The record gives the reactivity of an RNA of 177 nucleotides to 2A3 and DMS. Conditions: 150 mM KOAc, 10 mM MgCl2 and 150 mM bicine (pH 8.5), 24 C. For 2A3 the reverse transcriptase was SuperScript II with manganese. Reactivities are given for positions 27 through 126.
RNA sequence: GGGAACGACUCGAGUAGAGUCGAAAAAUUUGAGUAGAGAUUUGAAAUUAGCCAUGUACAUGAAGGUUUCCCCUCGUUUGAUCUUUGCCGUUCAAAUCUAUGCCACUAUCAUAUCAGGCAUGGUUAAGUGCACCAGUAUAUUCGUAUACUGGUGCACAAAAGAAACAACAACAACAAC
Reactivity to 2A3 in 0.01 (KOAc 150mM, MgCl2 10mM, bicine 150mM(pH8.5), 24C), signal-to-noise 1, nucleotides 027 to 126: a000u150u150u120g010a030g000u060a050g000a030g000a090u010u040u270g060a050a060a080u150u030a020g020c000c000a000u060g020u140a030c040a130u120g150a090a040g000g000u000u040u000c070c000c000c000u080c030g140u110u020u100g040a010u050c000u010u060u060g070c010c060g000u070u010c050a090a080a010u030c030u070a010u080g030c000c010a070c050u090a180u140c040a080u040a010u260c060a040g010g060c000a000u010g000g000u000u030a060a030
Reactivity to DMS in 0.01 (KOAc 150mM, MgCl2 10mM, bicine 150mM(pH8.5), 24C), signal-to-noise 3, nucleotides 027 to 126: a050u000u000u000g010a080g030u010a070g020a050g000a030u000u000u000g010a040a080a170u020u010a030g000c030c010a030u000g010u010a070c060a040u000g000a090a180g010g000u000u000u000c020c030c000c120u010c080g000u000u000u000g010a100u000c020u000u010u000g020c110c130g000u010u000c050a020a010a020u000c050u000a040u000g010c020c020a140c170u010a090u000c100a030u010a090u010c140a080g010g000c010a010u000g000g010u000u020a040a100